Source: RMDB library RFM100, as collected in RNAgym. An RNA of 177 nucleotides, treated with 2A3 and read out base by base. For 2A3 the reverse transcriptase was SuperScript II with manganese. The reactions ran in a buffer of 150 mM KOAc, 10 mM MgCl2 and 150 mM bicine (pH 8.5), at 24 C.
RNA sequence: GGGAACGACUCGAGUAGAGUCGAAAAACUAUAUGUACGCAUAUAGAAAAUUUGUCCUUGGUCACAUUACUGUUUUUUGUUAUCUGUAAUUUGCCGAGGACGAAAUAGCCUCGGUACGCCGAGGCAAACGACAACCACGGUUCGCCGUGGUUGUCGUAAAAGAAACAACAACAACAAC
Reactivity to 2A3 in 0.01 (KOAc 150mM, MgCl2 10mM, bicine 150mM(pH8.5), 24C), signal-to-noise 1, nucleotides 027 to 126: a060c000u000a020u000a000u000g050u110a000c300g000c000a000u010a000u000a000g080a000a040a000a100u030u060u100g000u000c020c000u000u000g000g080u260c040a000c000a060u010u000a010c030u000g140u060u060u000u060u120u140g230u300u170a130u070c090u010g000u000a000a000u000u000u000g000c020c000g000a000g000g020a000c000g000a000a000a000u090a000g000c000c000u000c020g000g010u020a040c300g110c000c000g000a000g020g000c000a000a000